[RMDB]
RNA sequence: GGGAACGACUCGAGUAGAGUCGAAAACCCUUAACCCUGGUUGAUGAACCAUGACCGUGCGGCUAGAGCGUGAUUGACGGCUACGAUCGUCCUCGGACGCAUCCAGUGCUGUAGAGGAUCGUUACUCCUUAUAAUUAAGGUUCGCCUUAAUUAUAAGAAAAGAAACAACAACAACAAC
Reactivity to DMS in 0.01 (KOAc 150mM, MgCl2 10mM, bicine 150mM(pH8.5), 24C), signal-to-noise 9, nucleotides 027 to 126: c010c000c010u010u010a110a130c070c030c030u000g010g010u000u000g010a110u010g010a090a080c060c050a060u000g010a080c080c050g010u010g010c060g010g010c040u000a070g010a090g020c060g020u010g000a120u010u000g010a070c050g010g010c030u010a100c130g000a050u010c030g010u000c010c020u000c150g020g010a050c080g000c100a040u000c060c090a110g000u000g010c010u000g010u000a120g010a080g000g010a050u000c050g010u000u000a100c070u000c060
Reactivity to 2A3 in 0.01 (KOAc 150mM, MgCl2 10mM, bicine 150mM(pH8.5), 24C), signal-to-noise 9, nucleotides 027 to 126: c010c000c000u010u130a090a080c010c000c020u030g030g030u030u040g090a180u080g060a050a030c030c020a070u070g050a030c010c030g040u030g020c040g030g000c010u060a030g010a020g060c020g010u040g030a100u010u090g040a020c000g030g020c030u070a040c050g050a070u030c020g030u020c000c010u030c050g100g120a010c020g000c010a030u010c030c040a080g060u040g060c010u050g010u030a030g020a020g070g010a030u030c010g010u030u040a110c020u020c010